The record gives the reactivity of an RNA of 207 nucleotides to DMS and 2A3. The reactions ran in a buffer of 150 mM KOAc, 10 mM MgCl2 and 150 mM bicine (pH 8.5), at 24 C. For DMS the reverse transcriptase was MarathonRT.
RNA sequence: GGGAACGACUCGAGUAGAGUCGAAAAGUUGGAACAAGUCAAAGCGAUUUUGAACAUGUGACGGAUAACUUUGUUGGCAAUAGUUAUGAUUUAAACAUUACACCUCAACAAAUGGCAGAAAUGGUUGAUAUUGUGUCCCACGAAACGGAUUCGCUUACAGUAGCCAUGAAUUCGUUCAUGGCUACUGAAAAGAAACAACAACAACAAC
Reactivity to DMS in 0.01 (KOAc 150mM, MgCl2 10mM, bicine 150mM(pH8.5), 24C), signal-to-noise 2, nucleotides 027 to 156: g010u000u000g020g020a110a100c050a080a180g030u010c040a090a100a160g020c060g020a150u000u020u010u010g030a080a110c070a060u000g010u000g000a110c050g040g020a070u000a050a050c050u000u010u000g020u010u000g000g030c040a060a150u000a050g000u000u000a050u010g010a140u000u000u000a100a060a060c050a060u000u010a050c040a050c070c040u000c030a080a080c050a030a030a040u000g040g000c030a120g000a050a020a120u010g040g010u000u000g000a070u000a090u000u000g030u010g000u000c020c020c000a110c030g020a080a090a110c080g000g000a120u010u000c050g000c060u000u000a200
Reactivity to 2A3 in 0.01 (KOAc 150mM, MgCl2 10mM, bicine 150mM(pH8.5), 24C), signal-to-noise 2, nucleotides 027 to 156: g090u100u030g000g000a090a020c040a040a050g050u120c060a120a000a000g010c050g070a040u000u010u070u170g050a070a060c040a020u110g000u010g070a010c030g000g010a080u040a070a020c010u070u060u010g050u020u030g070g020c070a090a150u010a150g010u010u040a030u030g050a090u050u160u230a080a040a000c010a000u000u030a010c020a030c000c030u050c000a000a060c010a020a060a040u080g060g000c030a030g020a060a070a000u060g060g000u040u060g030a020u030a060u080u040g030u000g030u020c010c000c000a010c030g080a000a080a010c000g000g000a030u030u090c040g000c000u010u010a000